[RMDB]
Structure probing data (2A3 and DMS) for a 177-nucleotide construct.
DMS (dimethyl sulfate) methylates the pairing face of unpaired adenines and cytosines.
The reactions ran in a buffer of 150 mM KOAc, 10 mM MgCl2 and 150 mM bicine (pH 8.5), at 24 C.
Reactivities are rounded to 0.1 and cut off at 0 and 3.
The 2A3 profile rests on 2,852 reads.
For DMS the reverse transcriptase was MarathonRT.

RNA sequence: GGGAACGACUCGAGUAGAGUCGAAAACCCAGACUUCGGUCUGGGAAAUAAGGAGCACACCAUGCAAUAUGCCAUUGCAGGGUGGCCUGUUGCUGGCUGCCCUUCCAAAUCACGUGUUCGCACGUGACGUAAUUUUACCGUUCGCGGUAAAAUUACGAAAAGAAACAACAACAACAAC
Reactivity to 2A3 in 0.01 (KOAc 150mM, MgCl2 10mM, bicine 150mM(pH8.5), 24C), signal-to-noise 1, nucleotides 027 to 126: c010c000c000a000g010a000c020u060u090c280g030g000u000c000u020g020g000g040a070a000a010u150a010a030g030g010a090g000c010a040c000a030c050c010a000u200g020c000a000a020u020a030u100g060c020c000a020u040u060g000c070a050g130g020g090u010g000g000c010c020u060g040u060u070g050c040u010g020g000c000u000g000c020c000c000u030u010c030c030a060a070a050u030c000a010c010g030u040g010u090u050c120g000c040a000c000g000u000g000a000
Reactivity to DMS in 0.01 (KOAc 150mM, MgCl2 10mM, bicine 150mM(pH8.5), 24C), signal-to-noise 3, nucleotides 027 to 126: c000c000c000a000g010a000c000u000u020c230g040g000u000c000u000g000g000g000a000a020a060u020a060a080g010g010a120g000c010a120c230a120c000c000a030u020g020c010a010a000u010a060u010g030c100c030a020u000u010g010c210a080g010g000g030u000g000g000c020c020u010g020u000u000g000c040u000g000g030c300u000g000c020c000c010u000u000c030c010a030a060a220u000c010a010c000g000u000g000u000u020c250g000c020a000c010g000u010g010a010